[RMDB]
RNA sequence: GGGAACGACUCGAGUAGAGUCGAAAAGUUAAUCCUUACCUGUCCCUCCUUUCGGAGGGCAGAUAGAAAAUGAUGAUUGGAGCUUGCAUGAUCUGCUGAUUAUAGCAUUUCCGUGUAAUCAGGACCUCAAUCCGCCUCCUUUCGAGGAGGCGGAUUGAAAAGAAACAACAACAACAAC
Reactivity to 2A3 in 0.01 (KOAc 150mM, MgCl2 10mM, bicine 150mM(pH8.5), 24C), signal-to-noise 1, nucleotides 027 to 126: g050u000u010a150a000u000c000c000u040u000a030c000c060u020g170u300c020c050c020u010c100c050u200u300u300c240g000g000a000g060g000g000c000a000g000a000u040a000g070a050a000a000a090u220g050a000u050g000a040u180u090g040g000a000g090c120u020u000g010c000a000u000g060a000u000c060u040g040c090u000g050a150u100u060a010u110a140g000c000a120u000u000u120c000c000g000u000g120u060a050a000u000c010a010g050g110a000c000c120u030